[RMDB]
RNA sequence: GGGAACGACUCGAGUAGAGUCGAAAAGGGAAAGAAGUCCUUCAGGGAUCCCCGGGGAAACCUGAGGAAGUCGAGGUCGGGGGGAGCAACUGCCUCGGUCGCCGCGGAUCACUGGCGUCCAGCGGAGCUAAUAAAUUGUCUUCGGACAAUUUAUUAGAAAAGAAACAACAACAACAAC
Reactivity to DMS in 0.01 (KOAc 150mM, MgCl2 10mM, bicine 150mM(pH8.5), 24C), signal-to-noise 2, nucleotides 027 to 126: g000g000g000a080a060a080g000a170a130g010u000c050c000u020u000c030a020g020g010g020a250u000c020c010c060c190g000g000g010g000a030a060a270c010c020u000g000a070g000g000a080a120g010u000c050g000a070g000g010u000c100g010g000g000g000g000g010a090g010c080a050a050c080u000g000c040c010u000c050g010g010u010c080g030c000c000g020c090g010g020a050u000c090a150c170u000g010g010c030g000u000c010c010a070g030c020g010g020a140g000
Reactivity to 2A3 in 0.01 (KOAc 150mM, MgCl2 10mM, bicine 150mM(pH8.5), 24C), signal-to-noise 1, nucleotides 027 to 126: g010g000g010a000a190a160g040a100a070g100u010c020c000u090u160c040a020g000g000g000a010u050c010c030c010c030g240g000g020g000a020a050a000c000c000u000g000a010g000g020a010a040g020u010c030g030a040g040g010u030c020g000g040g020g020g020g010a060g050c020a080a090c040u030g000c000c000u060c070g030g000u050c040g060c040c000g000c010g030g020a060u100c030a030c270u140g080g000c040g020u020c010c000a020g030c040g010g020a000g040